RNA sequence: GGGAACGACUCGAGUAGAGUCGAAAAGAGCCUCUAGCUACCAAGCCGCCGGUCGAAAGACGGCGGUGGCCAGGUUAAUUCCCUCGGGUACGGUGAUAACGCUAGAGGAUUGGGCAAUCCGCAGCCAAGCCCCUACGUUCCGCAGGGAAUACGGGGAGACAUAAGAAGUGUUCGCACUUCUUAUGUCAAAAGAAACAACAACAACAAC
Reactivity to 2A3 in 0.01 (KOAc 150mM, MgCl2 10mM, bicine 150mM(pH8.5), 24C), signal-to-noise 3, nucleotides 027 to 156: g090a030g050c000c000u000c000u000a000g010c000u020a010c050c120a010a000g000c000c000g000c010c020g240g230u050c020g030a110a020a040g000a000c000g000g010c030g000g010u030g000g000c000c020a010g000g010u070u090a050a050u130u090c020c020c020u040c130g020g000g010u100a260c040g020g000u010g000a020u010a050a020c080g000c000u000a000g000a000g000g000a000u020u100g040g010g000c020a030a110u030c040c040g000c080a010g000c010c010a030a060g010c020c000c000c010u040a040c190g010u000u000c020c010g090c110a090g050g040g040a000a000u040a030c050g000g010g000g000a040
Reactivity to DMS in 0.01 (KOAc 150mM, MgCl2 10mM, bicine 150mM(pH8.5), 24C), signal-to-noise 1, nucleotides 027 to 156: g000a230g030c000c010u000c020u010a030g010c010u000a010c000c000a220a300g040c000c000g000c000c000g050g060u010c050g030a170a110a280g010a050c000g030g010c010g020g020u000g000g010c020c030a040g020g000u010u000a100a140u020u000c220c000c010u000c040g020g000g010u010a080c150g050g020u000g000a140u020a030a050c140g000c030u000a050g010a030g010g010a050u020u000g020g020g010c000a090a120u000c020c030g050c030a120g000c050c050a060a190g010c030c010c000c020u000a070c080g020u000u000c060c010g030c200a090g010g010g010a070a010u000a090c070g000g000g090g000a190
Chemical mapping of a 207-nucleotide RNA with 2A3 and DMS. High 2A3 reactivity points to a flexible backbone, as in loops and unpaired stretches. Values are in units of 0.01, from 0 to 300, in steps of 10. The RNA was probed in 150 mM KOAc, 10 mM MgCl2 and 150 mM bicine (pH 8.5) at 24 C. Source: RMDB library RSTRND, as collected in RNAgym. The DMS profile rests on 2,297 reads. For 2A3, 3,699 sequencing reads were counted. In probing experiments dimethyl sulfate is read out at A N1 and C N3, which are open when not base-paired.